[RMDB]
RNA sequence: GGGAACGACUCGAGUAGAGUCGAAAAGAUAUGGACCAUUUAGGGAGUCGUUCGGAAACGAAUCGACGAAGAACUAACGGUGGUCCUAAGUCAAAUCUCCAAUAGCUCUUCGGAGCUAUUGGAGAAAGAAGAGAAUCGUGUUCGCACGAUUCUCUUCAAAAGAAACAACAACAACAAC
Reactivity to DMS in 0.01 (KOAc 150mM, MgCl2 10mM, bicine 150mM(pH8.5), 24C), signal-to-noise 1, nucleotides 027 to 126: g010a030u000a300u000g000g000a030c000c000a000u010u010u010a110g000g000g000a070g040u000c000g010u000u010c000g010g000a060a090a230c010g000a030a000u000c080g030a000c000g000a080a090g010a140a160c000u000a010a140c300g010g010u000g000g000u000c000c000u000a000a010g000u010c010a130a040a140u000c010u010c000c000a000a000u000a000g020c000u000c000u000u000c300g000g000a010g010c000u000a000u010u010g020g000a000g000a000a030a040
Reactivity to 2A3 in 0.01 (KOAc 150mM, MgCl2 10mM, bicine 150mM(pH8.5), 24C), signal-to-noise 1, nucleotides 027 to 126: g030a030u120a080u130g000g000a000c020c020a050u040u120u120a070g040g010g000a030g000u020c000g030u000u000c010g000g000a050a040a010c020g020a040a020u300c060g010a010c020g030a150a010g000a010a030c000u010a080a050c130g230g000u020g000g000u020c000c000u030a160a000g020u010c030a070a050a230u050c010u000c000c000a000a000u000a000g000c020u010c000u060u100c300g070g010a010g000c000u000a000u010u000g010g010a000g000a000a000a000
Structure probing data (DMS and 2A3) for a 177-nucleotide construct. The reactions ran in a buffer of 150 mM KOAc, 10 mM MgCl2 and 150 mM bicine (pH 8.5), at 24 C.